[RMDB]
About this RNA
Structure probing data (2A3 and DMS) for a 177-nucleotide construct. The RNA was probed in 150 mM KOAc, 10 mM MgCl2 and 150 mM bicine (pH 8.5) at 24 C. 2A3 adducts were read by reverse transcription with SuperScript II with manganese.
RNA sequence: GGGAACGACUCGAGUAGAGUCGAAAAGCACAAAGUACAGCACCAUAAUCAUUUGCAAAUAAUUUAUCGCUUCCGACAAAAUUGUUGUCCAGUGAAUGGUAUAAAUCAAACUGUCCUGAUUUAAGUGCUUCGUCCAGUUGUUCGCAACUGGACGAAGAAAAGAAACAACAACAACAAC
Reactivity to 2A3 in 0.01 (KOAc 150mM, MgCl2 10mM, bicine 150mM(pH8.5), 24C), signal-to-noise 2, nucleotides 027 to 126: g030c000a010c030a060a100a010g030u000a030c000a000g010c030a030c000c010a010u020a100a130u050c000a000u000u080u200g000c060a000a060a110u110a040a000u090u100u060a060u070c060g160c270u130u060c130c100g000a080c050a000a060a040a040u010u010g000u000u020g020u000c000c120a030g000u000g030a000a000u010g000g000u130a080u090a220a060a030u200c170a000a040a130c060u010g010u140c010c010u060g120a200u190u210u070a140a150g040u000g000
Reactivity to DMS in 0.01 (KOAc 150mM, MgCl2 10mM, bicine 150mM(pH8.5), 24C), signal-to-noise 1, nucleotides 027 to 126: g000c040a000c110a220a040a100g010u000a240c080a000g090c200a090c000c080a040u000a150a090u000c030a090u050u000u020g000c030a000a010a040u000a050a050u000u000u010a040u000c110g030c230u000u010c140c030g000a090c100a010a060a050a190u070u000g030u000u000g000u000c000c080a080g030u000g000a000a000u000g000g000u000a160u000a050a050a030u010c210a060a170a120c150u000g040u000c040c000u000g000a130u010u000u010a170a100g000u000g000
It was measured as part of the RMDB library OK1LIB.